[RMDB]
RNA sequence: GGGAACGACUCGAGUAGAGUCGAAAACAGUGGUCCUUCGGGACCACUGAAAAAGAUAUGGAGCAUGUUACGGGAGAAGCCAAGUCGGAAACGACUUGACUUCAUCGAUCGUAACCGCUGCUCCUAAGUCAAAAACCGACAAGUUCGCUUGUCGGAACUUUAGGACUUUGUUCGCAAAGUCCUAAAGAAAAGAAACAACAACAACAAC
Reactivity to DMS in 0.01 (KOAc 150mM, MgCl2 10mM, bicine 150mM(pH8.5), 24C), signal-to-noise 1, nucleotides 027 to 156: c030a030g000u010g000g010u030c000c000u000u010c300g060g040g030a000c000c010a010c000u010g010a000a040a110a180a090g000a080u000a170u000g000g000a000g030c030a100u000g000u010u010a010c010g040g100g020a140g040a020a030g000c000c000a010a030g010u010c010g020g000a190a080a250c010g030a030c020u000u000g020a000c000u000u010c010a050u010c190g000a100u000c000g010u010a000a020c010c120g020c070u010g010c000u000c000c010u010a000a040g010u010c030a050a100a060a150a170c010c000g000a050c010a020a010g010u000u000c300g030c060u010u000g030u010c000g010g000a000a000
Reactivity to 2A3 in 0.01 (KOAc 150mM, MgCl2 10mM, bicine 150mM(pH8.5), 24C), signal-to-noise 2, nucleotides 027 to 156: c000a010g000u000g000g000u000c000c040u050u050c300g060g000g000a020c000c000a000c000u000g000a000a000a000a010a000g020a010u070a030u120g000g000a000g000c010a010u110g000u000u000a000c010g020g000g000a030g000a020a000g000c000c000a010a000g020u000c000g000g040a030a040a110c010g000a000c020u000u010g000a010c000u010u000c010a080u070c060g020a050u060c010g000u000a000a000c000c000g010c000u000g000c020u000c000c000u000a000a000g020u010c010a040a010a050a120a190c020c000g010a000c000a000a010g050u080u200c250g110c130u000u010g000u010c010g010g020a000a020